[RMDB]
RNA sequence: GGGAACGACUCGAGUAGAGUCGAAAAAAAUAACGGUGCGUAACCUCAGGACUUGUUGACCUUCAGCGCCUCAAUGACCCUCUCGACGGUGGCGCGCGAGGUUGCAUCACCGAUGGGGGUGGCGCCCCCUUUAUCGAAGGUUCGCCUUCGAUAAAGGAAAAGAAACAACAACAACAAC
Reactivity to DMS in 0.01 (KOAc 150mM, MgCl2 10mM, bicine 150mM(pH8.5), 24C), signal-to-noise 6, nucleotides 027 to 126: a050a060a070u010a060a110c080g020g010u000g020c300g020u010a060a060c010c010u000c030a080g010g000a190c070u000u000g020u000u000g010a060c010c010u000u000c140a210g010c020g010c000c010u000c050a070a090u010g010a120c080c050c050u000c090u000c070g010a110c300g000g010u000g000g000c020g010c000g010c170g010a030g010g010u010u010g000c020a050u010c030a040c010c000g010a070u020g010g000g000g000g010u000g000g010c150g000c000c010c020
Reactivity to 2A3 in 0.01 (KOAc 150mM, MgCl2 10mM, bicine 150mM(pH8.5), 24C), signal-to-noise 5, nucleotides 027 to 126: a010a000a000u190a050a020c040g010g010u070g020c030g010u030a030a030c000c010u010c010a040g020g030a090c030u100u110g060u180u240g170a050c010c010u050u050c090a030g000c010g000c030c010u070c040a070a190u230g090a150c010c030c010u040c030u020c070g140a120c070g040g030u040g020g000c020g000c000g010c040g020a040g030g040u020u020g010c000a010u070c030a000c000c020g010a020u010g030g000g000g010g000u040g030g020c020g100c010c010c000